Background:
The record gives the reactivity of an RNA of 177 nucleotides to 2A3. 2A3 adducts were read by reverse transcription with SuperScript II with manganese. For 2A3, 371 sequencing reads were counted.
RNA sequence: GGGAACGACUCGAGUAGAGUCGAAAAAUAUUUCUGAAACCGAUUGGCCGGAUAUGUCGAACGAUAAUCGGAAGUGAUCGAAGGUGGAUCGGACCGUCUUGCCGAAAGCGGACGCGAUUGCCAGCCUACCAGUGGCGAUGUUCGCAUCGCCACUGGUAAAAGAAACAACAACAACAAC
Reactivity to 2A3 in 0.01 (KOAc 150mM, MgCl2 10mM, bicine 150mM(pH8.5), 24C), signal-to-noise 1, nucleotides 027 to 126: a000u260a120u000u000u000c140u090g000a030a000a000c000c000g000a020u020u020g200g000c290c090g000g000a060u000a000u240g300u180c080g040a080a130c000g000a000u040a100a000u200c000g000g300a030a070g110u120g140a000u200c140g000a110a110g130g020u140g090g090a020u000c000g020g000a000c000c000g120u080c000u060u300g100c000c010g300a240a000a000g000c000g000g000a000c000g000c000g070a100u000u080g000c000c000a000g090c020c000u000

Conditions: 150 mM KOAc, 10 mM MgCl2 and 150 mM bicine (pH 8.5), 24 C. Source: RMDB library OK1LIB, as collected in RNAgym.